RNA sequence: GGGAACGACUCGAGUAGAGUCGAAAAUAAGGGGAUUUAUUUAGAAACUUGGGCGGGUGAUUUAGUGACUCCAGCGCGUAUUAGUUUCUAUAUGAAUACGUGCGAUAGAUUACGCGCAAAGUAACAAGGGUAAAUUAUUCUUCGGAAUAAUUUACCCAAAAGAAACAACAACAACAAC
Reactivity to DMS in 0.01 (KOAc 150mM, MgCl2 10mM, bicine 150mM(pH8.5), 24C), signal-to-noise 1, nucleotides 027 to 126: u010a040a040g030g050g010g000a130u010u000u020a090u030u020u050a160g010a200a170a070c080u020u030g000g000g000c140g000g000g040u000g000a040u000u020u010a050g030u000g000a010c050u000c120c080a150g020c000g040c000g000u000a000u020u010a160g000u000u010u000c050u010a000u040a080u050g000a040a050u000a020c070g000u010g000c010g030a050u010a020g000a080u000u000a010c080g060c020g000c000a110a030a030g010u020a000a080c080a140a210
Reactivity to 2A3 in 0.01 (KOAc 150mM, MgCl2 10mM, bicine 150mM(pH8.5), 24C), signal-to-noise 2, nucleotides 027 to 126: u170a040a030g000g020g030g010a020u140u130u240a060u160u300u120a050g020a070a100a070c090u050u070g090g060g000c150g030g190g000u020g010a010u120u170u090a040g020u030g030a000c000u100c100c020a000g040c000g000c000g000u000a000u010u060a050g040u030u100u000c000u000a060u060a040u300g110a090a050u010a020c020g010u040g030c020g020a010u010a030g050a000u080u040a000c000g020c020g000c070a020a010a010g090u000a120a040c020a070a080

The record gives the reactivity of an RNA of 177 nucleotides to DMS and 2A3. It was measured as part of the RMDB library OK1LIB. The RNA was probed in 150 mM KOAc, 10 mM MgCl2 and 150 mM bicine (pH 8.5) at 24 C. The 2A3 profile rests on 899 reads. 2A3 adducts were read by reverse transcription with SuperScript II with manganese. Values cover nucleotides 27 to 126.